Chemical mapping of a 177-nucleotide RNA with DMS. For DMS the reverse transcriptase was MarathonRT. It was measured as part of the RMDB library OK2TST. The DMS profile rests on 447 reads. The RNA was probed in 150 mM KOAc, 10 mM MgCl2 and 150 mM bicine (pH 8.5) at 24 C.
[RMDB]
RNA sequence: GGGAACGACUCGAGUAGAGUCGAAAAAAAUCCAGCGUAUUAGCCCGGAUACAUCAAUUGACUGGCUACACUCCUGAACUUUAUCAGGGGGACAUUCGUGACCGCGCCCUGCUCGAUAAGAUAUUCGGGUUUAUCGUUCUUUCGAGAACGAUAAACCAAAAGAAACAACAACAACAAC
Reactivity to DMS in 0.01 (KOAc 150mM, MgCl2 10mM, bicine 150mM(pH8.5), 24C), signal-to-noise 1, nucleotides 027 to 126: a010a120a090u020c030c000a180g040c160g020u000a080u000u000a040g000c000c000c030g000g030a060u000a050c030a130u000c110a080a060u020u000g000a090c010u000g020g000c050u040a090c090a060c070u000c000c000u000g000a010a200c300u000u090u030a120u000c000a040g010g040g000g020g000a010c170a140u010u000c080g010u000g020a150c100c100g010c180g040c080c020c100u000g070c100u000c020g010a040u000a120a160g010a140u000a060u000u000c140g000